The record gives the reactivity of an RNA of 177 nucleotides to DMS and 2A3.
[RMDB]
RNA sequence: GGGAACGACUCGAGUAGAGUCGAAAAGAUUUAGAGUGGCUUAAUAGAGUUGAAACCUACAUUAAAUGGCCUUGGUGGGUUUGGCUACUCAUUGUGUUAGCCAUAGCAGCCUUUGCCUGUAUAGUUACUCUCUAGCUAACUUCGGUUAGCUAGAGAGAAAAGAAACAACAACAACAAC
Reactivity to DMS in 0.01 (KOAc 150mM, MgCl2 10mM, bicine 150mM(pH8.5), 24C), signal-to-noise 2, nucleotides 027 to 126: g000a100u010u000u020a050g000a180g020u000g000g000c010u010u010a080a110u010a160g010a050g030u010u070g010a110a100a080c100c000u000a020c050a070u010u000a030a130a130u020g010g010c040c040u000u010g010g020u000g000g010g000u010u000u000g020g000c030u000a020c040u010c150a180u000u000g020u010g010u010u000a030g000c000c000a040u010a080g020c030a200g010c030c050u000u000u000g000c010c010u000g010u000a110u010a080g000u000u020a090
Reactivity to 2A3 in 0.01 (KOAc 150mM, MgCl2 10mM, bicine 150mM(pH8.5), 24C), signal-to-noise 2, nucleotides 027 to 126: g040a040u160u250u300a060g000a020g140u090g020g000c000u030u040a060a010u060a300g070a040g030u070u060g050a120a080a050c020c000u020a080c060a060u120u040a040a070a260u030g000g000c000c000u000u010g080g000u000g030g140g000u000u000u030g040g000c010u000a020c030u030c120a050u120u280g140u000g090u070u040a000g020c000c000a000u040a030g030c020a020g000c000c000u000u010u080g040c000c000u020g100u090a190u040a100g060u000u020a020
The 2A3 profile rests on 906 reads.
The reactions ran in a buffer of 150 mM KOAc, 10 mM MgCl2 and 150 mM bicine (pH 8.5), at 24 C.